[RMDB]
Structure probing data (DMS and 2A3) for a 177-nucleotide construct.
Source: RMDB libraries RFM100 and RFMREP, as collected in RNAgym.
The reactions ran in a buffer of 150 mM KOAc, 10 mM MgCl2 and 150 mM bicine (pH 8.5), at 24 C.
2A3 adducts were read by reverse transcription with SuperScript II with manganese.
High DMS reactivity at an A or C suggests that its Watson-Crick edge is free.
RNA sequence: GGGAACGACUCGAGUAGAGUCGAAAAUCUGCGGCAUGAAAAAAAGCGCGAUGUAAGUAAAGGAGGGGGAAUAUUUACAUCGCGUUGCCAACUUAUGACAGAACAUCACUGGAGAGUAAUCUGUUGCCAUAACGACGAAUUUCGAUUCGUCGUUAUGAAAAGAAACAACAACAACAAC
Reactivity to DMS in 0.01 (KOAc 150mM, MgCl2 10mM, bicine 150mM(pH8.5), 24C), signal-to-noise 5, nucleotides 027 to 126: u010c020u000g020c140g010g020c010a050u030g010a000a010a090a120a060a110a140g000c000g010c000g000a010u000g010u000a010a000g000u010a020a080a140g010g010a140g020g000g000g040g000a160a300u010a010u000u000u000a010c000a000u000c000g000c010g020u000u010g010c030c020a110a120c130u010u010a050u000g010a060c040a020g000a030a070c120a090u010c090a050c070u010g000g010a090g000a060g010u010a060a070u010c020u000g000u000u000g020c160
Reactivity to 2A3 in 0.01 (KOAc 150mM, MgCl2 10mM, bicine 150mM(pH8.5), 24C), signal-to-noise 9, nucleotides 027 to 126: u020c010u050g040c000g020g010c030a070u170g150a060a060a030a030a020a050a030g020c000g000c000g000a000u000g000u000a000a020g010u010a080a170a190g190g080a200g050g050g010g000g000a050a020u010a000u030u000u000a000c000a000u000c000g000c000g000u010u010g000c000c000a020a050c030u130u110a070u160g030a010c010a020g040a080a030c030a090u090c020a030c090u100g050g040a080g010a010g060u040a030a060u020c020u030g020u020u030g010c010